[RMDB]
RNA sequence: GGGAACGACUCGAGUAGAGUCGAAAAGGUAAUGAGUUCGCUCAUUACCAAAGAAAGCGUGCUAGUCUGAGCCCACAGACUAGCACGGCGCAAAGAAAGAAAAAAGAACCUGGUUCGCCAGGUUCAACUUUUGUAUUGGGUUCGCCCAAUACAAAAGAAAAGAAACAACAACAACAAC
Reactivity to DMS in 0.01 (KOAc 150mM, MgCl2 10mM, bicine 150mM(pH8.5), 24C), signal-to-noise 3, nucleotides 027 to 126: g020g010u000a020a000u000g010a020g020u000u010c280g020c010u000c000a000u000u010a000c000c000a080a120a100g020a080a050a140g000c000g050u000g010c010u000a000g000u000c010u000g000a130g030c020c010c010a300c000a000g000a010c000u000a000g000c010a000c000g000g020c150g010c140a060a060a120g010a110a090a100g020a010a040a090a100a110a160g010a000a000c000c000u000g020g010u010u010c210g010c000c010a010g010g010u020u000c000a040a060
Reactivity to 2A3 in 0.01 (KOAc 150mM, MgCl2 10mM, bicine 150mM(pH8.5), 24C), signal-to-noise 2, nucleotides 027 to 126: g000g000u000a000a000u010g010a000g030u050u120c160g030c100u010c000a000u000u010a010c000c010a010a000a000g020a010a060a020g100c010g010u010g000c010u010a010g000u010c000u010g020a020g030c000c000c000a010c000a000g000a000c000u000a000g000c000a010c000g000g000c020g000c050a150a140a030g050a140a160a050g100a050a130a080a030a030a010g000a000a000c010c010u010g030g000u010u030c110g030c030c000a000g000g010u000u000c000a000a010
An RNA of 177 nucleotides, treated with DMS and 2A3 and read out base by base. The RNA was probed in 150 mM KOAc, 10 mM MgCl2 and 150 mM bicine (pH 8.5) at 24 C. Reactivities are given for positions 27 through 126. It was measured as part of the RMDB library M2PK50.